An RNA of 207 nucleotides, treated with 2A3 and read out base by base. It was measured as part of the RMDB library RNAMAK. Values are in units of 0.01, from 0 to 300, in steps of 10. The 2A3 profile rests on 3,120 reads. Reactivities are given for positions 27 through 156. The RNA was probed in 150 mM KOAc, 10 mM MgCl2 and 150 mM bicine (pH 8.5) at 24 C.

RNA sequence: GGGAACGACUCGAGUAGAGUCGAAAAGGGGUCGGUCGUUUGACGGUUAGUGGAGCUGCACACUGAAGCCUCCACGGUGUGUCAGCGUUGAAACUAACCCGAGACCGACGGAGGCACCCAAAAACGUUGAACAUUUGUUCGCAAAUGUUCAACGUAAGUAGAGAAAGCGAUUCGUCGCUUUCUCUACAAAAGAAACAACAACAACAAC
Reactivity to 2A3 in 0.01 (KOAc 150mM, MgCl2 10mM, bicine 150mM(pH8.5), 24C), signal-to-noise 2, nucleotides 027 to 156: g140g030g080g020u020c010g000g030u000c010g010u120u280u230g020a000c000g010g010u000u000a000g000u000g000g000a000g010c000u000g000c000a000c000a000c010u020g020a160a020g020c000c010u000c010c000a010c010g000g010u010g010u010g090u190c020a000g000c020g090u170u020g000a000a000a000c000u000a000a000c000c000c000g000a010g000a000c000c000g000a000c000g010g000a000g000g000c000a040c000c000c000a090a100a020a010a000c000g000u000u000g000a000a000c000a000u000u000u030g040u080u140c260g000c140a020a010a000u000g000u010u000c000a000a000c000g000u010a000a050